[RMDB]
RNA sequence: GGGAACGACUCGAGUAGAGUCGAAAAUCGGCAGAGAAUGAACAUGUACAUGCUGGCCAACCCAACCCCACGAUCCUCCAUCGGCAUGAUCAUGAUGUGUUCUCAAAUAUCAGGCCAGUAAAUCACCCCUUCUCCCAAACUUCGGUUUGGGAGAAGGAAAAGAAACAACAACAACAAC
Reactivity to DMS in 0.01 (KOAc 150mM, MgCl2 10mM, bicine 150mM(pH8.5), 24C), signal-to-noise 2, nucleotides 027 to 126: u030c110g000g000c000a200g000a030g000a050a070u000g000a090a080c060a000u000g010u000a110c050a030u000g030c000u050g000g000c150c070a030a190c040c050c040a040a040c030c000c000c120a030c150g050a130u010c010c000u030c000c030a010u030c020g000g000c000a000u010g000a300u030c030a060u000g000a050u000g000u020g000u030u000c000u010c010a020a030a060u030a030u030c170a090g000g000c000c010a100g020u030a040a070a050u030c100a170c150c060
Reactivity to 2A3 in 0.01 (KOAc 150mM, MgCl2 10mM, bicine 150mM(pH8.5), 24C), signal-to-noise 3, nucleotides 027 to 126: u060c010g010g000c010a020g020a010g030a130a110u120g050a080a030c040a050u110g030u090a030c000a030u030g020c000u030g020g060c010c020a040a040c010c010c000a000a060c040c000c000c000a040c050g000a030u020c010c000u060c010c030a110u080c040g010g000c000a010u030g040a090u010c010a010u050g070a030u110g050u020g060u040u050c030u000c000a020a150a000u230a030u110c020a010g000g050c000c010a000g010u060a000a060a040u030c030a130c000c020